RNA sequence: GGGAACGACUCGAGUAGAGUCGAAAAGGAAAUGCAUCUCAAGUGCACCAAUUAGUAGGUAUGAGAGGAUUAAUGUCGGAUCCCCAGGGCCAAAUGAUUGAUUUACCCAUUCAAAGCAAUUUACGUGCAAAGCCUAACCUUUCGAGGUUAGGCUUUGAAAAGAAACAACAACAACAAC
Reactivity to DMS in 0.01 (KOAc 150mM, MgCl2 10mM, bicine 150mM(pH8.5), 24C), signal-to-noise 3, nucleotides 027 to 126: g020g030a040a050a140u010g000c070a030u000c050u010c200a070a200g020u010g020c040a070c060c030a060a110u010u000a060g010u030a110g010g020u000a040u020g020a110g010a080g010g010a080u000u000a050a100u000g010u000c130g010g000a060u000c010c010c010c040a090g000g000g010c030c030a040a030a080u010g000a070u000u010g000a110u020u000u000a110c030c020c040a090u020u000c130a080a080a160g000c110a030a060u010u010u000a090c170g040u000g000
The data come from the RNA Mapping Database (RMDB), library OK2TST.
Structure probing data (DMS) for a 177-nucleotide construct.
Values cover nucleotides 27 to 126.
The reactions ran in a buffer of 150 mM KOAc, 10 mM MgCl2 and 150 mM bicine (pH 8.5), at 24 C.